This 177-nucleotide RNA was probed chemically with 2A3 and DMS. The data come from the RNA Mapping Database (RMDB), library OK2TRN. For 2A3, 2,776 sequencing reads were counted. For DMS the reverse transcriptase was MarathonRT. The RNA was probed in 150 mM KOAc, 10 mM MgCl2 and 150 mM bicine (pH 8.5) at 24 C. Values are in units of 0.01, from 0 to 300, in steps of 10.
RNA sequence: GGGAACGACUCGAGUAGAGUCGAAAAGUCAGGGACAGGGUGAGCUCAGACCUUGGUCACCAAGGCAAAAGGCACAGAGCGAGUUGGGGGUCCGGGGGACCAGAACCAGCCGGGCGGUGGGGCGGCACAUUACACGUGUAUUCGUACACGUGUAAUGAAAAGAAACAACAACAACAAC
Reactivity to 2A3 in 0.01 (KOAc 150mM, MgCl2 10mM, bicine 150mM(pH8.5), 24C), signal-to-noise 2, nucleotides 027 to 126: g050u040c030a020g030g050g010a050c050a050g060g000g080u070g060a040g000c010u010c040a070g010a200c010c000u000u060g010g060u150c050a110c210c050a010a070g000g000c030a070a120a000a070g010g000c050a020c050a090g070a010g010c040g030a040g040u060u070g010g000g000g000g000u030c010c080g060g020g010g010g000a010c000c040a020g000a070a050c020c000a030g050c050c060g000g000g040c090g030g000u150g030g000g000g000c010g030g000c050a020
Reactivity to DMS in 0.01 (KOAc 150mM, MgCl2 10mM, bicine 150mM(pH8.5), 24C), signal-to-noise 4, nucleotides 027 to 126: g020u010c040a090g010g030g020a170c090a070g010g010g020u000g000a130g020c020u000c050a150g000a120c010c010u000u000g010g010u010c080a150c100c080a030a060g000g010c060a040a090a080a150g000g010c080a100c100a110g000a050g000c030g020a080g020u000u000g000g020g010g010g000u000c050c060g010g000g010g000g000a050c030c070a100g000a070a120c050c040a060g000c050c040g010g000g010c100g000g010u010g000g000g020g030c080g000g000c080a080